[RMDB]
The record gives the reactivity of an RNA of 170 nucleotides to DMS and 2A3. Source: RMDB library 15KLIB, as collected in RNAgym. The RNA was probed in 150 mM KOAc, 10 mM MgCl2 and 150 mM bicine (pH 8.5) at 24 C. Reactivities are rounded to 0.1 and cut off at 0 and 3. For 2A3 the reverse transcriptase was SuperScript II with manganese. Values cover nucleotides 27 to 129.
RNA sequence: GGGAACGACUCGAGUAGAGUCGAAAAACUUUUCCCCGGCCAAAAAUACAGUAGCGAUUGUAAUGUCGUACGGUAUUCUUUGGACGGUAAUUUCAGAACAGAGGUUGAUCCCGACCUAUCUGCUUUCAAAGGGAUCUGUUCGCAGAUCCCAAAAGAAACAACAACAACAAC
Reactivity to DMS in 0.01 (KOAc 150mM, MgCl2 10mM, bicine 150mM(pH8.5), 24C), signal-to-noise 1, nucleotides 027 to 129: a000c220u080u020u020u040c140c080c000c020g000g020c010c040a000a020a030a010a000u010a010c000a050g040u030a050g050c110g030a010u030u060g030u150a070a070u100g020u000c010g000u010a030c070g030g000u040a030u000u000c180u060u020u000g030g040a050c000g010g000u040a000a000u090u040u010c130a080g010a070a070c080a060g010a070g050g040u040u040g010a140u030c010c010c000g010a040c050c010u000a070u020c040u000g010c100u100u050u050c120a070a140a000
Reactivity to 2A3 in 0.01 (KOAc 150mM, MgCl2 10mM, bicine 150mM(pH8.5), 24C), signal-to-noise 6, nucleotides 027 to 129: a000c030u210u050u140u160c050c030c010c000g000g000c000c000a000a010a000a000a020u000a020c020a010g020u020a040g220c000g010a000u020u080g160u260a130a130u300g000u050c000g000u010a000c000g000g000u000a000u020u030c120u020u010u000g000g000a000c000g000g010u060a040a150u080u220u170c130a000g010a040a020c030a010g050a010g080g000u010u000g020a070u030c000c000c000g000a000c000c000u020a100u050c000u010g080c060u050u180u070c090a080a050a030